Source: RMDB libraries RFM100 and RFMREP, as collected in RNAgym.
An RNA of 177 nucleotides, treated with DMS and 2A3 and read out base by base.
Reactivities are given for positions 27 through 126.
The reactions ran in a buffer of 150 mM KOAc, 10 mM MgCl2 and 150 mM bicine (pH 8.5), at 24 C.
2A3 adducts were read by reverse transcription with SuperScript II with manganese.
DMS adducts were read by reverse transcription with MarathonRT.
High 2A3 reactivity points to a flexible backbone, as in loops and unpaired stretches.
[RMDB]
RNA sequence: GGGAACGACUCGAGUAGAGUCGAAAACAAAUGGGCCUAACUCUGCCACAUAUAUAAUAUCGGAGAUGGCAAAGGCUUGUGACGGAGAUAUCUCUCUUAAGCCUUUCCUGCAUCAGAGAAUGGCUCCAAUUUGCGCAAAUUUCGAUUUGCGCAAAUUAAAAGAAACAACAACAACAAC
Reactivity to DMS in 0.01 (KOAc 150mM, MgCl2 10mM, bicine 150mM(pH8.5), 24C), signal-to-noise 4, nucleotides 027 to 126: c020a070a160a160u020g000g010g010c000c000u000a100a270c020u000c000u000g000c050c040a140c200a060u000a040u040a090u010a120a120u020a090u000c150g010g000a160g000a090u010g000g010c160a020a020a020g000g000c000u000u000g000u020g010a020c240g000g000a030g020a130u030a060u040c070u000c140u010c020u000u010a020a010g010c000c010u000u000u000c020c000u000g000c220a120u060c000a000g000a020g010a050a140u040g000g000c000u010c000c220
Reactivity to 2A3 in 0.01 (KOAc 150mM, MgCl2 10mM, bicine 150mM(pH8.5), 24C), signal-to-noise 6, nucleotides 027 to 126: c050a000a100a120u160g000g010g000c010c000u040a090a040c010u030c000u030g080c040c010a070c040a020u120a000u060a000u030a170a200u090a070u160c130g100g000a080g030a100u080g020g040c090a010a000a040g000g010c000u010u030g080u050g060a110c180g070g010a010g010a030u200a230u190c040u020c000u030c000u090u150a010a010g000c000c000u000u020u030c010c000u020g100c050a070u130c000a040g000a000g040a040a030u090g000g000c010u000c000c000